[RMDB]
RNA sequence: GGGAACGACUCGAGUAGAGUCGAAAAUUCGAUCCGGACCGGCUCAUCUCGGCAAAGGGCGGCAGUCCUCAGUGCUCUUACUCUUUCCUAUAAAGAGGAGACUGCUGGACUCGCCGCCCGAGCCCGACUACAGUUCUCUUCGGAGAACUGAAAAGAAACAACAACAACAAC
Reactivity to DMS in 0.01 (KOAc 150mM, MgCl2 10mM, bicine 150mM(pH8.5), 24C), signal-to-noise 7, nucleotides 027 to 129: u040u030c070g020a080u030c060c020g000g000a050c140c040g000g020c030u000c000a090u020c020u000c040g030g000c070a030a110a100g000g010g020c020g030g040c040a050g010u020c010c020u000c020a040g030u020g000c080u010c010u020u030a300c020u020c020u010u010u000c180c160u040a110u050a040a000a000g020a020g000g030a000g020a010c010u020g030c080u000g010g030a000c020u000c100g050c020c020g010c000c030c000g020a000g010c060c000c010g010a070c170u020a100
Reactivity to 2A3 in 0.01 (KOAc 150mM, MgCl2 10mM, bicine 150mM(pH8.5), 24C), signal-to-noise 9, nucleotides 027 to 129: u060u020c030g020a020u040c020c020g010g030a010c000c010g030g000c010u020c020a100u030c050u020c020g000g000c030a080a050a060g000g010g000c000g000g000c000a000g000u000c000c000u010c000a040g000u140g230c020u010c010u060u190a280c010u020c010u020u050u050c070c090u180a180u180a280a030a000g000a000g000g010a000g010a000c000u010g040c070u020g000g020a000c000u010c060g000c000c000g010c000c000c000g000a010g000c000c000c000g010a010c010u130a040
Chemical mapping of a 170-nucleotide RNA with DMS and 2A3.
Conditions: 150 mM KOAc, 10 mM MgCl2 and 150 mM bicine (pH 8.5), 24 C.
2A3 adducts were read by reverse transcription with SuperScript II with manganese.
For DMS the reverse transcriptase was MarathonRT.